[RMDB]
RNA sequence: GGGAACGACUCGAGUAGAGUCGAAAAAAGACAACGAAUACAAACGCCAUAAUUUGUGUCCGGGAACAUACGCUUCCAGAUUAUGCGAUAGCAAGACUAACACACAAUGUACACCCUGUGGUUCGGGUACCUUCACAUCUCGCAAUAAUCAUUUACCGUUCCUCUUUGUGUUCGCACAAAGAGGAACAAAAGAAACAACAACAACAAC
Reactivity to 2A3 in 0.01 (KOAc 150mM, MgCl2 10mM, bicine 150mM(pH8.5), 24C), signal-to-noise 2, nucleotides 027 to 156: a000a000g110a070c090a100a040c080g070a030a020u090a050c040a040a050a030c080g000c030c030a070u100a120a040u030u100u010g030u010g000u000c060c020g040g040g020a010a000c040a050u100a120c050g020c050u030u020c040c020a020g000a040u060u110a030u090g050c060g060a050u100a020g050c050a030a040g030a030c020u080a130a000c010a000c000a000c000a100a150u140g040u190a020c020a110c040c010c000u020g020u020g060g020u100u090c080g000g020g000u020a050c000c020u060u080c050a030c000a080u020c020u010c020g060c020a000a120u010a050a050u020c070a050u100u090u120a140c050c040